Chemical mapping of a 207-nucleotide RNA with 2A3. Conditions: 150 mM KOAc, 10 mM MgCl2 and 150 mM bicine (pH 8.5), 24 C. For 2A3, 479 sequencing reads were counted. 2A3 adducts were read by reverse transcription with SuperScript II with manganese.
[RMDB]
RNA sequence: GGGAACGACUCGAGUAGAGUCGAAAACCCUGUCAUGAGGCCGAAACGAAGGCACGUACCCCUUCGAAUGGCGUCGGGGAGGCAGCGGCUAUAUAUGCGCCUAAUGCUGGCAUCCGGGAACGAGCGUAUUAGACAGUAAUCUUCGGAUUACUGUCAAGCUGAUGCUUUGAUUCGUCAAAGCAUCAGCAAAAGAAACAACAACAACAAC
Reactivity to 2A3 in 0.01 (KOAc 150mM, MgCl2 10mM, bicine 150mM(pH8.5), 24C), signal-to-noise 1, nucleotides 027 to 156: c000c000c040u030g060u120c090a000u210g060a000g040g000c040c000g090a050a090a000c000g000a000a050g000g000c090a010c060g100u170a060c000c000c000c000u020u050c000g090a190a160u270g020g000c000g040u060c020g000g000g010g060a030g050g020c030a010g010c010g010g000c010u020a010u010a070u010a020u300g050c040g000c000c010u070a220a050u090g000c020u000g070g000c000a130u030c000c010g000g080g000a130a100c040g060a040g040c000g010u020a090u100u080a170g000a000c000a000g010u000a000a000u000c000u000u040c260g080g000a000u000u000a000c000u000g000u000c000a010a000